[RMDB]
RNA sequence: GGGAACGACUCGAGUAGAGUCGAAAAGCAACUUAGGAUUUUAGGCUCCCCGUGCGUGUCUCGAACCAUGCCGGGACAAACCCACGGGGGCUGGCGGUCCCCGUGCGGUCAAAAUCAAACCGCUGGAAAAACAGUUCUAGCUUCGGCUAGAACUGAACGUAAGGCUAUCGUUCGCGAUAGCCUUACGAAAAGAAACAACAACAACAAC
Reactivity to 2A3 in 0.01 (KOAc 150mM, MgCl2 10mM, bicine 150mM(pH8.5), 24C), signal-to-noise 2, nucleotides 027 to 156: g020c040a020a090c070u140u050a110g050g080a230u150u100u050u120a060g000g050c020u120c000c000c000c020g010u100g070c040g000u080g010u000c050u040c150g060a040a040c060c060a050u040g040c030c010g000g000g000a020c020a020a130a080c000c000c000a010c000g000g010g000g000g000c000u000g000g000c000g000g000u000c000c000c000c000g000u000g000c070g000g000u020c020a100a110a050a170u040c000a090a120a020c000c010g000c040u040g070g000a100a070a020a030a030c000a000g000u000u000c000u000a000g030c000u030u130c280g070g000c020u000a010g000a000a000c000u000g000a040a000